[RMDB]
RNA sequence: GGGAACGACUCGAGUAGAGUCGAAAAGCUUUUUUUUCGGAUUAGGCGUGGAGGCGAAAGUCACCCUCCUCGCAUCGCAAGUUCGUGCUUGCGACUUACACGUAAGGCGAGGGGUGGGCGAAAGUUGAAAACACGAUGUUGUUCGCAACAUCGUGAAACCCGUCAAAUACUUCGGUAUUUGACGGGUAAAAGAAACAACAACAACAAC
Reactivity to 2A3 in 0.01 (KOAc 150mM, MgCl2 10mM, bicine 150mM(pH8.5), 24C), signal-to-noise 1, nucleotides 027 to 156: g040c030u000u000u080u080u000u050u100u100c060g050g000a050u060u100a170g000g030c020g000u020g000g090a020g010g000c080g050a140a040a000g040u000c040a090c000c000c000u030c020c000u000c000g010c000a000u020c000g000c000a000a000g010u280u270c130g180u300g020c000u000u010g010c000g000a000c000u000u080a070c110a000c110g090u090a110a000g030g030c000g000a010g000g000g000g000u300g030g010g000c010g060a160a050a000g010u000u030g040a030a000a080a020c010a030c030g000a000u000g000u030u010g000u050u040c050g000c080a010a010c000a000u000c000g000u000g020a010a000